Chemical mapping of a 177-nucleotide RNA with 2A3 and DMS. It was measured as part of the RMDB library OK2TST. DMS adducts were read by reverse transcription with MarathonRT. For 2A3, 1,393 sequencing reads were counted. Conditions: 150 mM KOAc, 10 mM MgCl2 and 150 mM bicine (pH 8.5), 24 C. For 2A3 the reverse transcriptase was SuperScript II with manganese.
[RMDB]
RNA sequence: GGGAACGACUCGAGUAGAGUCGAAAACCACUGUGAUACCGCUGGCAAACUCUGACGCAAGCUUCGAAACCGUAGCCGUGCUGAAAACGGCGCUUGAUGGUCUUAGGUAUCACUUUGGCGCCACCACCCACCUCUGUGGUUUCGACCACAGAGGUGGAAAAGAAACAACAACAACAAC
Reactivity to 2A3 in 0.01 (KOAc 150mM, MgCl2 10mM, bicine 150mM(pH8.5), 24C), signal-to-noise 1, nucleotides 027 to 126: c000c010a000c010u000g000u020g010a000u020a010c020c000g020c140u080g080g000c070a110a110a120c110u100c070u180g040a060c090g080c080a030a010g010c010u080u160c080g120a190a100a090c060c060g050u060a020g010c010c010g030u020g030c150u140g120a030a040a080a090c030g000g020c040g000c000u010u070g020a050u110g090g020u020c020u050u130a050g000g000u010a000u030c000a020c000u000u000u000g000g000c000g040c000c020a070c000c030a030c050
Reactivity to DMS in 0.01 (KOAc 150mM, MgCl2 10mM, bicine 150mM(pH8.5), 24C), signal-to-noise 1, nucleotides 027 to 126: c010c000a030c030u010g000u020g000a050u010a000c000c000g100c220u000g000g000c100a140a100a120c130u000c140u010g030a120c090g080c050a070a100g040c030u010u030c070g040a070a180a030c030c030g080u000a300g000c020c040g000u000g030c180u020g040a040a130a150a050c020g000g000c020g000c130u000u040g020a050u000g050g000u000c040u000u010a050g030g000u020a000u000c030a020c020u000u010u000g030g000c010g000c020c010a160c060c040a190c160